Background: An RNA of 177 nucleotides, treated with DMS and 2A3 and read out base by base. The 2A3 profile rests on 2,483 reads. The reactions ran in a buffer of 150 mM KOAc, 10 mM MgCl2 and 150 mM bicine (pH 8.5), at 24 C. Values are in units of 0.01, from 0 to 300, in steps of 10. The DMS profile rests on 3,108 reads.

RNA sequence: GGGAACGACUCGAGUAGAGUCGAAAAGUAAUCAAGGUCGCCAGCUUCGGCCUGAUAACGCCGAUAGGCUAAAUGGUAGUUAUCAAUCUCGUUACCUAAGUCCAACCAGCAACUGCUGAGAUUGUCAAAUGAUGCUUGGAUUCGUCCAAGCAUCAUUAAAAGAAACAACAACAACAAC
Reactivity to DMS in 0.01 (KOAc 150mM, MgCl2 10mM, bicine 150mM(pH8.5), 24C), signal-to-noise 4, nucleotides 027 to 126: g010u020a070a050u000c080a080a070g020g020u000c030g040c120c070a130g020c140u000u010c020g010g010c010c070u000g000a050u000a050a080c060g000c020c020g010a150u020a100g020g000c060u000a060a070a080u000g020g000u000a100g030u000u000a040u020c010a090a040u010c050u000c040g000u000u010a060c040c020u000a050a080g010u000c060c020a070a120c060c040a110g010c040a160a070c180u000g010c060u000g000a100g010a060u010u000g000u000c120a080
Reactivity to 2A3 in 0.01 (KOAc 150mM, MgCl2 10mM, bicine 150mM(pH8.5), 24C), signal-to-noise 3, nucleotides 027 to 126: g030u050a040a070u110c090a050a020g010g010u030c000g030c060c030a020g040c050u100u090c030g020g010c000c000u000g010a040u000a050a020c020g030c000c020g070a120u120a120g090g010c010u050a030a060a100u210g040g010u070a170g010u010u030a090u130c040a010a050u000c030u010c040g080u070u040a050c000c010u060a070a020g030u000c020c010a030a070c010c010a020g020c030a080a180c160u210g050c030u040g030a040g020a230u030u080g060u020c040a000